[RMDB]
RNA sequence: GGGAACGACUCGAGUAGAGUCGAAAAGAUAUGGAGAAUAGCGACGAUCAUUGUGUCGGAAACGACACUGAUGAUUAGCUACUCCUAAGUCAAAACCUCGCAUGAAAGUUCGCUUUCAUGCGAGGAACCCACCAUUUUACUUCGGUAAAAUGGUGGGAAAAGAAACAACAACAACAAC
Reactivity to DMS in 0.01 (KOAc 150mM, MgCl2 10mM, bicine 150mM(pH8.5), 24C), signal-to-noise 1, nucleotides 027 to 126: g000a010u000a300u010g000g010a050g010a180a130u000a020g000c000g010a150c300g000a010u000c010a000u000u020g010u000g020u000c000g010g010a190a080a190c000g010a010c010a000c000u000g010a010u000g010a000u000u010a180g030c000u000a020c000u000c000c010u020a050a140g000u000c010a110a100a050a140c000c000u000c020g020c000a000u000g000a010a000a000g010u000u010c260g010c010u000u000u000c000a000u000g000c000g000a000g000g000a020a030
Reactivity to 2A3 in 0.01 (KOAc 150mM, MgCl2 10mM, bicine 150mM(pH8.5), 24C), signal-to-noise 2, nucleotides 027 to 126: g040a030u040a060u130g040g020a000g030a300a300u050a070g000c040g170a160c230g010a050u010c000a010u050u000g000u020g000u010c010g020g000a020a070a010c010g000a000c000a000c020u050g020a000u010g000a000u000u040a010g020c000u010a010c000u000c000c000u010a230a050g040u000c040a010a010a070a200c010c000u000c000g000c000a000u000g040a000a000a000g040u060u200c210g060c300u040u000u000c010a000u000g000c000g000a000g000g000a000a000
An RNA of 177 nucleotides, treated with DMS and 2A3 and read out base by base. DMS adducts were read by reverse transcription with MarathonRT.